[RMDB]
RNA sequence: GGGAACGACUCGAGUAGAGUCGAAAACAACCUACGUACUUCGCCAUCGAUAUUUGUUUGACGACCAGAGCUUCGGCGUCUUUCCAGACGCUCACGACGAUCUUUUCCUUCAAAUUCGACCCAAGUCCUCUGUCUUACCAUUCGUGGUAAGACAGAGAAAAGAAACAACAACAACAAC
Reactivity to 2A3 in 0.01 (KOAc 150mM, MgCl2 10mM, bicine 150mM(pH8.5), 24C), signal-to-noise 9, nucleotides 027 to 126: c020a010a080c000c010u040a040c030g040u030a050c020u030u040c020g010c020c010a050u060c040g070a050u040a100u160u070u070g150u020u040u100g060a050c030g020a040c010c020a040g010a020g080c040u080u060c040g030g000c000g010u000c000u070u100u010c040c020a020g000a030c020g000c010u020c010a040c040g080a010c030g040a050u030c020u020u030u030u020c010c000u020u040c020a040a110a210u080u050c030g040a060c000c000c010a030a030g060u050c020
Reactivity to DMS in 0.01 (KOAc 150mM, MgCl2 10mM, bicine 150mM(pH8.5), 24C), signal-to-noise 3, nucleotides 027 to 126: c100a080a180c060c030u000a080c060g010u000a070c060u000u000c050g030c020c030a050u000c050g000a070u030a070u000u020u000g000u020u010u000g010a130c080g000a080c040c060a080g030a130g000c050u020u000c080g010g000c040g000u000c010u010u010u010c150c190a060g020a140c070g000c020u000c070a070c080g010a110c050g030a030u020c010u000u000u010u000c010c000u020u000c080a030a060a150u020u010c030g000a080c000c020c030a060a080g000u010c120
An RNA of 177 nucleotides, treated with 2A3 and DMS and read out base by base. DMS (dimethyl sulfate) methylates the pairing face of unpaired adenines and cytosines. Values cover nucleotides 27 to 126. The reactions ran in a buffer of 150 mM KOAc, 10 mM MgCl2 and 150 mM bicine (pH 8.5), at 24 C.